Record summary
The record gives the reactivity of an RNA of 177 nucleotides to 2A3 and DMS. For DMS, 30,808 sequencing reads were counted. Values are in units of 0.01, from 0 to 300, in steps of 10. Values cover nucleotides 27 to 126.
[RMDB]
RNA sequence: GGGAACGACUCGAGUAGAGUCGAAAAUGGUAGGUUUAGAUGCGCACUGAGUCGGGAGCACUACCGUGUUAGCCGUACAGUUCUCGGACACCACGAAUAGUAGUAGAUUCACUACUGUGCAUCUCAAGGGUAUAUCAUACUUCGGUAUGAUAUGCCCAAAAGAAACAACAACAACAAC
Reactivity to 2A3 in 0.01 (KOAc 150mM, MgCl2 10mM, bicine 150mM(pH8.5), 24C), signal-to-noise 9, nucleotides 027 to 126: u150g060g030u100a090g030g060u040u050u090a020g000a020u020g010c010g000c010a020c070u070g020a030g070u050c030g010g030g040a040g050c030a010c020u040a050c030c040g000u000g010u020u110a050g030c000c000g020u060a050c050a190g060u120u070c080u030c020g010g020a020c020a030c100c020a010c020g030a050a060u050a080g010u000a010g010u010a020g020a180u070u070c040a010c070u110a040c010u040g000u010g000c010a030u000c010u010c060a080a130
Reactivity to DMS in 0.01 (KOAc 150mM, MgCl2 10mM, bicine 150mM(pH8.5), 24C), signal-to-noise 9, nucleotides 027 to 126: u010g000g020u010a050g010g010u000u020u010a030g000a020u010g000c010g000c080a040c140u010g000a090g000u000c030g000g000g010a090g010c060a050c030u010a060c150c090g020u000g010u010u010a070g010c020c020g000u020a120c150a110g020u020u020c050u000c010g000g010a040c060a110c130c040a060c060g010a070a120u010a030g010u000a060g000u000a080g010a140u030u030c090a040c090u010a030c130u000g010u010g000c040a030u000c000u000c230a100a150